[RMDB]
RNA sequence: GGGAACGACUCGAGUAGAGUCGAAAAAGAAGAAGUAAUGUCAAAAGUUUCCGGCGAAAGCUGCCAUAUGGAUCGCACAGAUUUAAAUGAAGCAUAUCUGGAGGCAAGGAGAAAAAUUUGGGCAGCCGCCUCAUUAGUCGUUCGCGACUAAUGAGGCAAAAGAAACAACAACAACAAC
Reactivity to 2A3 in 0.01 (KOAc 150mM, MgCl2 10mM, bicine 150mM(pH8.5), 24C), signal-to-noise 2, nucleotides 027 to 126: a000g130a000a000g010a010a000g040u160a010a130u050g060u140c050a040a030a030a030g030u000u000u000c020c000g010g000c020g060a000a120a020g000c000u010g020c050c000a000u060a000u140g050g030a100u060c000g000c060a000c040a110g020a000u140u080u160a060a130a070u100g030a080a010g110c080a000u030a000u140c000u020g030g070a060g030g000c040a070a070g220g020a030g130a080a020a020a020a020u080u210u120g000g000g000c000a000g000c000c010
Reactivity to DMS in 0.01 (KOAc 150mM, MgCl2 10mM, bicine 150mM(pH8.5), 24C), signal-to-noise 1, nucleotides 027 to 126: a080g000a110a000g000a120a010g000u020a120a100u060g000u000c020a090a000a060a070g130u000u000u000c020c110g000g010c130g000a190a030a150g000c000u000g050c060c050a040u000a050u020g020g000a150u000c080g000c060a140c020a070g010a010u000u020u000a010a100a030u060g000a070a060g040c000a070u000a040u000c000u000g030g000a090g020g000c090a070a210g010g000a020g000a070a030a020a120a010u000u010u000g000g000g000c010a000g000c000c070

The record gives the reactivity of an RNA of 177 nucleotides to 2A3 and DMS. Source: RMDB library OK1LIB, as collected in RNAgym.